Chemical mapping of a 177-nucleotide RNA with 2A3 and DMS.
[RMDB]
RNA sequence: GGGAACGACUCGAGUAGAGUCGAAAAGAUAUGGAUUGCGUUGUAGGGAGUGCGUGGGUCGGAAACGACCCAACGCACGACGAUCUACACCGCAAUCCUAAGUCAAAGGCUUGGUUCGCCAAGCCAACAAAGUUCUAAAGUUCGCUUUAGAACUUUGAAAAGAAACAACAACAACAAC
Reactivity to 2A3 in 0.01 (KOAc 150mM, MgCl2 10mM, bicine 150mM(pH8.5), 24C), signal-to-noise 2, nucleotides 027 to 126: g040a020u080a030u210g010g000a000u000u010g000c010g000u020u010g010u010a010g010g010g020a060g010u000g020c000g000u020g020g000g010u000c020g030g040a090a070a030c020g000a010c020c010c020a060a030c000g010c020a000c010g020a010c000g000a010u000c000u010a000c000a000c020c000g010c000a000a000u000c010c000u000a010a010g010u010c040a080a070a190g000g000c000u000u010g000g020u070u100c110g040c040c000a000a000g000c000c000a010a010
Reactivity to DMS in 0.01 (KOAc 150mM, MgCl2 10mM, bicine 150mM(pH8.5), 24C), signal-to-noise 5, nucleotides 027 to 126: g010a050u010a300u000g010g010a010u000u000g010c000g010u010u000g000u000a010g010g000g000a040g040u000g020c010g070u000g010g010g020u000c010g020g010a090a120a220c010g000a010c000c010c000a010a010c000g020c000a000c000g000a060c260g010a020u000c000u000a010c010a010c040c000g000c000a000a000u000c000c000u000a020a090g000u010c030a120a130a130g020g000c010u000u000g000g000u000u010c280g010c010c000a010a010g010c000c000a060a070
High DMS reactivity at an A or C suggests that its Watson-Crick edge is free. The RNA was probed in 150 mM KOAc, 10 mM MgCl2 and 150 mM bicine (pH 8.5) at 24 C. Reactivities are rounded to 0.1 and cut off at 0 and 3. The DMS profile rests on 9,226 reads.